[RMDB]
RNA sequence: GGGAACGACUCGAGUAGAGUCGAAAAUGGCUUCGACGCGGGUAGCAAAACCUAAGGGGCAUGCCGAGGUGCAGUGACCUCGUUAAUCACGCUGCAACAUUAUAGUUGCCAACGACGACAACUACGCACUCGCUGCUUAAAACCCAGUAGGGUGCCGGGAGUAUUCUAAGUUCGCUUAGAAUACUCCAAAAGAAACAACAACAACAAC
Reactivity to DMS in 0.01 (KOAc 150mM, MgCl2 10mM, bicine 150mM(pH8.5), 24C), signal-to-noise 2, nucleotides 027 to 156: u000g010g010c060u040u020c030g020a040c070g040c070g000g000g020u000a120g020c060a090a070a120a100c010c040u050a120a150g020g020g040g020c030a070u010g060c130c000g000a050g000g030u010g000c010a180g040u010g010a170c010c030u000c010g020u000u010a070a120u000c040a120c010g000c010u000g010c070a130a060c070a140u010u010a180u010a070g020u010u000g020c020c010a100a110c190g000a150c040g010a000c000a020a030c020u010a060c070g000c010a030c030u000c010g010c000u020g000c000u000u000a040a060a170a180c260c300c000a080g040u010a110g070g000g000u000g000c000c120g000
Reactivity to 2A3 in 0.01 (KOAc 150mM, MgCl2 10mM, bicine 150mM(pH8.5), 24C), signal-to-noise 5, nucleotides 027 to 156: u100g040g010c010u050u030c030g050a060c060g030c120g060g000g060u080a120g060c070a060a050a050a080c020c010u060a080a080g000g000g010g000c010a020u090g020c030c000g000a010g020g000u020g000c000a010g010u060g050a240c000c000u010c010g050u040u040a000a010u040c010a000c040g010c020u000g000c010a010a030c020a030u190u230a050u070a160g020u000u020g020c030c020a190a070c210g100a040c060g020a020c050a020a010c010u110a050c060g000c010a000c000u010c010g010c000u000g000c000u030u020a000a020a010a020c000c000c010a000g010u120a260g000g010g000u000g000c020c010g060